[RMDB]
RNA sequence: GGGAACGACUCGAGUAGAGUCGAAAACGUGAGCAUGACGGUGCGCCGCCCGAAGCGGCGGUUCAGCAAGGUGACGCUCAGCGCGCCGACGAAGCCGCCGACGCCGAGCGCGCUGACCGUCACGCCACAUCGGAUCGGAGUUCGCUCCGAUCCGAUGAAAAGAAACAACAACAACAAC
Reactivity to 2A3 in 0.01 (KOAc 150mM, MgCl2 10mM, bicine 150mM(pH8.5), 24C), signal-to-noise 1, nucleotides 027 to 126: c050g030u090g040a070g030c020a060u070g050a030c030g080g020u030g000c020g020c000c010g000c020c040c000g130a240a030g040c070g060g010c000g000g040u040u030c010a030g000c020a080a110g130g000u070g090a040c090g000c040u070c020a030g000c010g000c020g000c000c030g000a040c040g020a060a030g050c030c020g000c050c040g030a010c020g000c000c000g030a080g020c030g010c000g000c000u020g000a010c000c010g000u000c000a000c000g000c020c010a060
Reactivity to DMS in 0.01 (KOAc 150mM, MgCl2 10mM, bicine 150mM(pH8.5), 24C), signal-to-noise 2, nucleotides 027 to 126: c090g070u000g010a090g030c010a100u000g000a060c040g000g010u000g000c170g010c000c010g020c010c010c060g000a140a170g040c150g000g000c010g010g000u000u000c060a050g020c090a120a110g010g010u010g000a060c050g000c170u010c030a020g000c010g020c010g020c000c020g020a000c010g010a040a120g010c040c030g010c050c000g000a120c020g010c040c000g000a100g000c000g000c010g020c000u000g000a020c040c020g030u010c010a000c040g020c070c060a120

Chemical mapping of a 177-nucleotide RNA with 2A3 and DMS. DMS (dimethyl sulfate) methylates the pairing face of unpaired adenines and cytosines. For DMS the reverse transcriptase was MarathonRT. The 2A3 profile rests on 2,382 reads. Conditions: 150 mM KOAc, 10 mM MgCl2 and 150 mM bicine (pH 8.5), 24 C. 2A3 is a SHAPE reagent: it acylates the 2'-hydroxyl of flexible nucleotides of all four kinds.